[RMDB]
RNA sequence: GGGAACGACUCGAGUAGAGUCGAAAACGGAGCGCCAAGGCAGUCAUGGCCGAUCGCAGCCUCGCGCUGGGCGCUCUGCAGCAGGCACGCGCCGACGUGGACGCCAAGCGCACCAAGCUCGCCAAGCCCGGAAGCUAUUAUUCGUAAUAGCUUCCGGAAAAGAAACAACAACAACAAC
Reactivity to DMS in 0.01 (KOAc 150mM, MgCl2 10mM, bicine 150mM(pH8.5), 24C), signal-to-noise 3, nucleotides 027 to 126: c100g000g000a050g000c050g040c020c050a090a120g010g030c010a090g020u010c140a060u010g000g010c010c030g000a070u000c160g020c100a070g000c020c010u000c250g010c030g010c010u020g010g000g000c010g000c150u000c020u000g000c020a040g020c110a250g010g020c040a050c280g020c190g010c030c020g020a150c120g010u000g010g020a050c020g010c000c000a070a040g020c040g000c040a100c140c070a070a120g000c040u000c060g000c030c050a130a100g000c120
Reactivity to 2A3 in 0.01 (KOAc 150mM, MgCl2 10mM, bicine 150mM(pH8.5), 24C), signal-to-noise 3, nucleotides 027 to 126: c030g030g020a040g030c050g030c080c060a130a100g020g050c050a050g100u150c060a100u170g090g000c030c010g020a050u130c040g020c090a010g040c010c030u100c130g010c020g010c020u010g000g030g000c020g000c120u000c000u000g000c010a010g030c010a010g030g050c050a020c200g210c040g000c050c020g040a050c060g020u050g040g020a020c010g000c000c000a030a000g010c000g020c000a010c020c010a070a000g000c020u050c040g030c000c030a110a050g010c020

Description
Conditions: 150 mM KOAc, 10 mM MgCl2 and 150 mM bicine (pH 8.5), 24 C. This 177-nucleotide RNA was probed chemically with DMS and 2A3. It was measured as part of the RMDB library OK2TRN. The 2A3 profile rests on 3,415 reads. 2A3 adducts were read by reverse transcription with SuperScript II with manganese.